[RMDB]
RNA sequence: GGGAACGACUCGAGUAGAGUCGAAAAGAGCGUCGAGAGACGAAGAGAAGUGCACCGAUCAGCAAUGGUGAACGUAAUGGUGCACAAGAGUAAGUCAGUGUAACGUUCUCCGGGCACUGGAGGCAGACCGCAUACUCACCUUCGGGUGAGUAUGCGGAAAAGAAACAACAACAACAAC
Reactivity to DMS in 0.01 (KOAc 150mM, MgCl2 10mM, bicine 150mM(pH8.5), 24C), signal-to-noise 1, nucleotides 027 to 126: g000a090g000c010g000u000c020g000a130g010a240g000a000c000g000a000a070g000a050g000a100a180g000u000g000c060a020c000c000g000a090u010c000a050g000c170a120a190u020g000g020u000g000a050a020c180g010u020a120a120u000g000g000u080g010c030a040c010a030a020g000a080g000u000a110a010g000u000c000a050g010u070g000u020a060a020c030g010u000u000c120u000c070c010g000g000g000c000a020c070u000g010g000a020g000g000c190a090g000a210
Reactivity to 2A3 in 0.01 (KOAc 150mM, MgCl2 10mM, bicine 150mM(pH8.5), 24C), signal-to-noise 1, nucleotides 027 to 126: g080a000g070c000g010u060c000g000a000g000a000g000a120c020g040a050a000g040a000g050a120a000g030u000g010c110a090c010c000g000a170u140c010a030g100c090a020a090u140g050g030u030g070a000a000c040g000u050a140a140u170g000g000u020g020c000a000c000a010a040g000a000g160u160a170a000g060u020c010a000g000u000g000u020a000a110c000g010u100u000c110u050c020c000g000g010g050c010a060c060u110g000g030a000g140g000c090a090g040a160
Structure probing data (DMS and 2A3) for a 177-nucleotide construct. Reactivities are given for positions 27 through 126. It was measured as part of the RMDB library OK1LIB. For 2A3, 612 sequencing reads were counted. The DMS profile rests on 1,164 reads. The RNA was probed in 150 mM KOAc, 10 mM MgCl2 and 150 mM bicine (pH 8.5) at 24 C.